RNA sequence: GGGAACGACUCGAGUAGAGUCGAAAAGAUAUGGAGAUUUCCGUUGAAACCAGGUCUCGGAAACGAGACUGGUGGAGGGUCUCCUAAGUCAAACGAAUGCUACAUUGUUCGCAAUGUAGCAUUCGAACAUCGCACAAAAGUUCGCUUUUGUGCGAUGAAAAGAAACAACAACAACAAC
Reactivity to DMS in 0.01 (KOAc 150mM, MgCl2 10mM, bicine 150mM(pH8.5), 24C), signal-to-noise 2, nucleotides 027 to 126: g010a010u000a300u000g000g020a010g000a010u000u020u020c000c020g000u000u000g000a140a200a010c000c000a010g020g000u020c000u000c010g000g010a080a150a140c010g000a000g020a110c000u000g000g030u000g000g000a050g030g000g000u010c030u000c000c000u000a030a060g000u020c020a060a130a260c010g000a010a010u010g000c000u000a010c000a010u010u000g000u000u000c220g010c010a010a020u000g010u000a000g000c000a000u000u000c010g000a070a130
Reactivity to 2A3 in 0.01 (KOAc 150mM, MgCl2 10mM, bicine 150mM(pH8.5), 24C), signal-to-noise 1, nucleotides 027 to 126: g020a000u140a030u120g060g000a040g000a030u300u250u170c010c000g010u070u030g010a020a040a000c010c000a050g110g270u000c000u000c010g000g050a140a030a040c010g010a000g020a010c000u000g000g020u010g030g030a010g000g000g000u000c000u060c010c000u000a140a040g070u060c070a100a000a040c020g030a000a000u000g020c000u000a000c010a010u000u030g000u060u120c300g050c150a000a000u010g020u000a000g030c000a000u010u000c000g000a000a000